[RMDB]
RNA sequence: GGGAACGACUCGAGUAGAGUCGAAAAGAUAUGGACUAAGGGAGCUGAUCCUCGGAAACGAGGAUACAGCGAGGAUCUUAGGUCCUAAGUCAAAAGCCUAGGCAUAAGUUCGCUUAUGCCUAGGCAACGUAAGCCCUCUGUUCGCAGAGGGCUUACGAAAAGAAACAACAACAACAAC
Reactivity to DMS in 0.01 (KOAc 150mM, MgCl2 10mM, bicine 150mM(pH8.5), 24C), signal-to-noise 1, nucleotides 027 to 126: g000a050u010a300u000g010g010a210c000u010a010a000g010g000g000a070g030c030u000g020a140u000c000c000u000c000g010g010a070a030a140c010g000a000g000g000a000u000a010c000a010g030c000g020a060g000g000a010u010c010u000u010a040g000g010u030c000c000u020a070a140g010u030c040a090a160a160a110g010c000c000u030a000g000g010c000a000u000a000a020g020u000u000c210g010c010u000u000a000u000g000c010c000u020a000g000g020c020a000a030